[RMDB]
Source: RMDB library OK1LIB, as collected in RNAgym. Structure probing data (2A3 and DMS) for a 177-nucleotide construct. The 2A3 profile rests on 1,037 reads. The reactions ran in a buffer of 150 mM KOAc, 10 mM MgCl2 and 150 mM bicine (pH 8.5), at 24 C. DMS adducts were read by reverse transcription with MarathonRT. High DMS reactivity at an A or C suggests that its Watson-Crick edge is free.
RNA sequence: GGGAACGACUCGAGUAGAGUCGAAAAGAGAGAAAUACCGCGCGAAAUCAGAGAAAGGACUGUAAGGACGCGAAAUCCUUUCCGUCACUUACCGCAAGAAAGAGCGAUGUGUGACGAAUAGAGAGAGAAUAGUCCCUGGUUUCGACCAGGGACUAUUAAAAGAAACAACAACAACAAC
Reactivity to 2A3 in 0.01 (KOAc 150mM, MgCl2 10mM, bicine 150mM(pH8.5), 24C), signal-to-noise 2, nucleotides 027 to 126: g120a000g000a010g000a000a100a000u250a050c020c020g000c050g000c000g020a000a010a140u050c010a000g000a000g040a060a000a000g000g020a010c000u030g000u040a100a040g200g050a100c080g000c000g020a000a000a060u000c000c000u000u010u000c010c000g000u000c000a000c000u100u120a160c010c010g050c050a010a070g140a280a100a020g060a010g030c000g010a020u050g100u020g000u000g060a010c000g050a000a040u150a010g100a000g020a000g000a000g000
Reactivity to DMS in 0.01 (KOAc 150mM, MgCl2 10mM, bicine 150mM(pH8.5), 24C), signal-to-noise 2, nucleotides 027 to 126: g000a070g020a080g010a070a050a060u050a150c070c020g010c010g060c010g000a020a140a100u000c020a030g000a120g000a030a070a040g000g020a030c000u010g050u030a090a090g000g000a090c030g000c050g000a020a120a090u040c040c010u000u000u000c000c050g000u010c010a040c000u010u030a070c000c040g000c000a050a090g040a130a090a130g000a110g010c000g010a000u010g000u020g000u000g020a050c030g000a070a030u000a030g010a050g000a120g000a120g000